This 177-nucleotide RNA was probed chemically with DMS and 2A3. The RNA was probed in 150 mM KOAc, 10 mM MgCl2 and 150 mM bicine (pH 8.5) at 24 C. For 2A3 the reverse transcriptase was SuperScript II with manganese. DMS adducts were read by reverse transcription with MarathonRT.
[RMDB]
RNA sequence: GGGAACGACUCGAGUAGAGUCGAAAAGAUAUGGAAACAUGAGCUUUUGACGCUCCCUCGGAAACGAGAAGAGCGAUAAGCUCUAGUUUCCUAAGUCAAAACAGGGAAGCGUUCGCGCUUCCCUGAACAACUGUUAAAUGUUCGCAUUUAACAGUUGAAAAGAAACAACAACAACAAC
Reactivity to DMS in 0.01 (KOAc 150mM, MgCl2 10mM, bicine 150mM(pH8.5), 24C), signal-to-noise 6, nucleotides 027 to 126: g010a030u000a210u000g000g000a020a010a040c010a230u000g010a020g020c010u000u000u000u010g010a170c030g000c000u010c010c080c010u000c020g010g000a040a040a100c010g010a040g000a090a230g000a010g010c000g000a110u010a030a050g000c000u000c000u010a160g010u000u010u000c000c000u000a000a060g010u000c030a080a050a100a200c010a010g010g000g010a020a010g010c000g020u010u010c240g010c010g010c010u000u010c000c000c000u000g000a040a090
Reactivity to 2A3 in 0.01 (KOAc 150mM, MgCl2 10mM, bicine 150mM(pH8.5), 24C), signal-to-noise 6, nucleotides 027 to 126: g000a000u020a010u070g000g010a010a010a010c010a020u030g000a000g010c010u160u270u300u300g160a030c010g000c000u000c000c000c000u000c000g000g000a040a020a020c010g000a000g010a090a020g000a020g000c010g100a120u100a300a020g000c000u000c000u010a040g000u000u000u010c000c000u000a000a000g000u000c020a010a000a160a220c010a010g020g000g010a000a010g000c010g040u100u250c260g030c000g040c160u000u000c000c000c000u000g000a000a000